[RMDB]
RNA sequence: GGGAACGACUCGAGUAGAGUCGAAAAGGGAAUGGUGGUUUACCCCGUUAUCAAAUGAUUACCGACCAAUAAUUGGCGAAACUCGUUUCGCGUUGGCUUCCUAAUUCAAGGAAUUAGCGUGCCUUCAAAGACAUCAAGAAGUUCGCUUCUUGAUGAACUAAGGGUCUGAGUUCGCUCAGACCCUUAGAAAAGAAACAACAACAACAAC
Reactivity to 2A3 in 0.01 (KOAc 150mM, MgCl2 10mM, bicine 150mM(pH8.5), 24C), signal-to-noise 2, nucleotides 027 to 156: g020g020g040a070a190u130g030g020u030g000g010u080u050u200a090c020c000c010c010g060u130u040a080u120c030a020a160a180u140g040a060u040u120a030c040c030g060a070c000c040a060a030u200a140a070u100u050g000g000c010g010a030a040a020c100u050c130g070u000u030u000c020g000c010g070u000u010g010g000c010u210u090c040c000u000a000a020u010u020c060a110a190g130g000a030a020u000u010a020g050c070g060u000g010c000c000u000u030c020a090a120a000g090a040c010a000u000c000a000a020g020a000a000g020u060u190c210g020c030u000u000c000u000u000g000a000u000g000a010a000
Reactivity to DMS in 0.01 (KOAc 150mM, MgCl2 10mM, bicine 150mM(pH8.5), 24C), signal-to-noise 2, nucleotides 027 to 156: g000g020g030a070a100u010g000g000u000g000g010u000u000u010a110c040c010c010c000g010u020u010a100u000c060a030a120a070u030g010a140u020u010a070c000c000g030a140c070c010a070a160u000a070a160u010u000g050g020c000g000a110a110a040c030u000c100g000u000u000u000c020g010c050g010u000u000g000g000c030u010u000c040c010u000a030a070u000u000c010a140a300g030g010a070a020u000u010a060g010c080g010u010g000c050c020u000u000c020a060a070a180g000a230c010a010u000c010a000a000g000a020a030g030u010u000c300g040c020u010u020c030u000u010g030a010u010g010a030a090